[RMDB]
RNA sequence: GGGAACGACUCGAGUAGAGUCGAAAACAAGGUCCACGCGAACGGAUGGUGGUCUCGGCCGCGCUGUUGAUUCGGGAACGGGGAGCCCACGCCACCGCCAUCUCGGAUGUGCUGCAGCACAGCGGCGCGUAUGCGGAGUCUUCGGACUCCGCAUACGAAAAGAAACAACAACAACAAC
Reactivity to 2A3 in 0.01 (KOAc 150mM, MgCl2 10mM, bicine 150mM(pH8.5), 24C), signal-to-noise 4, nucleotides 027 to 126: c090a060a030g060g050u020c030c050a050c050g110c000g040a080a020c080g030g010a060u080g050g020u030g000g030u080c070u040c080g100g010c000c020g020c020g000c030u020g020u070u050g060a150u070u070c030g060g010g010a160a140c040g000g020g000g050a040g020c010c010c020a070c060g030c010c020a100c000c000g000c030c030a060u000c050u040c020g060g050a030u060g060u130g070c030u090g010c040a080g060c010a050c010a050g010c000g020g000c020g000
Reactivity to DMS in 0.01 (KOAc 150mM, MgCl2 10mM, bicine 150mM(pH8.5), 24C), signal-to-noise 2, nucleotides 027 to 126: c100a090a060g060g010u000c000c000a120c000g020c080g020a090a070c080g010g000a090u000g000g040u000g050g000u020c060u010c100g000g000c060c060g010c070g040c030u000g000u010u060g000a110u010u010c030g000g000g000a040a110c040g000g000g000g000a100g010c050c030c090a000c040g010c010c030a080c010c000g030c000c090a100u010c000u010c020g000g040a060u000g020u020g020c060u010g030c090a080g010c040a060c140a090g040c010g000g000c010g000
Structure probing data (2A3 and DMS) for a 177-nucleotide construct. The RNA was probed in 150 mM KOAc, 10 mM MgCl2 and 150 mM bicine (pH 8.5) at 24 C. As a SHAPE reagent, 2A3 marks flexible, mostly unpaired nucleotides at the ribose 2'-OH. For DMS the reverse transcriptase was MarathonRT. Source: RMDB library OK1LIB, as collected in RNAgym. For 2A3, 2,226 sequencing reads were counted. 2A3 adducts were read by reverse transcription with SuperScript II with manganese.